[RMDB]
RNA sequence: GGGAACGACUCGAGUAGAGUCGAAAAAACAGCUGCACGUACGUACGAGCAGUUUUCGAAAUAAACGUACGUACCAAAUAAAUAAAUUCUACUCGAUGCGAAACAAAGCAAAGUCGUUCCCAGGGAAUGUAAUUCGAUACUUCGGUAUCGAAUUACAAAAAGAAACAACAACAACAAC
Reactivity to 2A3 in 0.01 (KOAc 150mM, MgCl2 10mM, bicine 150mM(pH8.5), 24C), signal-to-noise 1, nucleotides 027 to 126: a000a000c080a040g030c010u150g000c040a000c090g020u010a000c000g000u000a030c030g010a040g000c110a050g030u060u030u020u040c060g040a110a000a000u170a040a070a000c010g010u010a000c010g020u030a030c000c000a120a050a050u140a060a160a000u140a040a020a020u020u010c010u010a000c010u020c020g030a040u060g010c020g010a100a110a110c070a020a040a050g000c000a000a040a020g010u000c000g010u000u000c000c000c000a000g020g000g000a160a080